[RMDB]
RNA sequence: GGGAACGACUCGAGUAGAGUCGAAAAGGGUAUAUACUAUGUGGUAAAGUGGGAUCUUAAACUAAAAAGGAGGUUUUGUGGGACAUAGUAUAUAGGGGGAUUUUUAGUUUAAGAUGGAGGGAGGGAAGGGAUAUUCAAACUUCGGUUUGAAUAUCCCAAAAGAAACAACAACAACAAC
Reactivity to 2A3 in 0.01 (KOAc 150mM, MgCl2 10mM, bicine 150mM(pH8.5), 24C), signal-to-noise 1, nucleotides 027 to 126: g030g020g010u050a020u010a020u000a050c050u050a120u010g070u050g170g040u210a100a150a150g040u070g000g050g040a030u050c000u040u060a000a200a140c030u070a010a110a000a000a000g110g020a030g010g000u000u080u170u160g170u140g030g050g010a010c010a020u040a000g050u000a010u000a000u010a070g030g000g000g010g010a010u030u190u030u000u000a040g020u000u000u140a030a060g010a040u010g000g030a100g050g040g020a230g050g000g000a000a060